This 207-nucleotide RNA was probed chemically with 2A3.
RNA sequence: GGGAACGACUCGAGUAGAGUCGAAAAUCAUUUGAUGCAGUUCUAUACUGUACCUUGUCUUUCUGCAAAGCAAAGAUAAUAUUGUAGUUUAAAACUUGGCUAUCCACCACCAUGAGGGAAUAUGCUUCUCUUAUUUUUCUGCAGAAACAUUUAAAAACAUACCCCUCCCUUUCGAGGGAGGGGUAUGAAAAGAAACAACAACAACAAC
Reactivity to 2A3 in 0.01 (KOAc 150mM, MgCl2 10mM, bicine 150mM(pH8.5), 24C), signal-to-noise 1, nucleotides 027 to 156: u040c000a000u040u180u250g130a140u090g000c020a030g010u030u100c080u150a100u050a180c000u010g030u000a040c000c000u040u060g120u050c030u010u010u010c010u000g010c110a150a000a100g000c000a000a000a130g070a060u030a010a030u030a130u030u220g060u070a040g000u080u290u300a020a070a020a010c030u100u100g030g000c020u050a020u010c020c000a040c020c010a040c060c030a140u090g080a100g010g020g020a060a010u020a040u140g050c080u090u030c020u000c000u030u000a060u060u060u000u070u040c070u030g010c000a000g040a040a050a000c030a000u170u300u300a030a030a200a000a020
It was measured as part of the RMDB library OK3TST. Values cover nucleotides 27 to 156. The reactions ran in a buffer of 150 mM KOAc, 10 mM MgCl2 and 150 mM bicine (pH 8.5), at 24 C.